[RMDB]
Structure probing data (2A3 and DMS) for a 177-nucleotide construct. Reactivities are given for positions 27 through 126. Conditions: 150 mM KOAc, 10 mM MgCl2 and 150 mM bicine (pH 8.5), 24 C. 2A3 adducts were read by reverse transcription with SuperScript II with manganese.
RNA sequence: GGGAACGACUCGAGUAGAGUCGAAAAGGGCUGAGCAGGUGUCCCCUUUCUCCCUCACCAUUCCAUGUGCGUUCCUCCCAGAACUGCACACCUGGUCAAAGAGGAAGGCCUUUCCUGAUAAAGGAGGUCAAUAGAAGGAGUUCGCUCCUUCUAUUGAAAAAGAAACAACAACAACAAC
Reactivity to 2A3 in 0.01 (KOAc 150mM, MgCl2 10mM, bicine 150mM(pH8.5), 24C), signal-to-noise 9, nucleotides 027 to 126: g050g010g000c050u080g030a030g050c040a020g030g050u050g050u070c010c010c000c010u010u030u010c020u010c010c000c000u030c010a060c030c010a050u110u020c020c020a030u060g010u020g020c010g020u010u000c010c010u070c010c010c000a010g010a030a020c040u170g010c010a010c000a000c010c030u030g000g040u050c060a070a070a030g050a030g030g020a050a040g030g000c010c000u060u070u040c000c000u050g050a110u180a150a080a020g050g020a030g010g050
Reactivity to DMS in 0.01 (KOAc 150mM, MgCl2 10mM, bicine 150mM(pH8.5), 24C), signal-to-noise 9, nucleotides 027 to 126: g010g000g010c080u010g000a080g020c080a050g000g010u010g000u010c040c030c000c030u000u000u010c030u000c020c010c010u010c170a090c050c050a080u010u010c080c110a110u010g010u000g010c010g010u000u000c000c050u000c040c030c040a190g000a020a030c030u030g040c020a020c020a040c150c120u000g000g010u010c150a070a110a110g000a060g000g010a070a060g010g000c030c010u000u020u010c010c000u000g000a110u020a050a100a040g010g010a050g010g010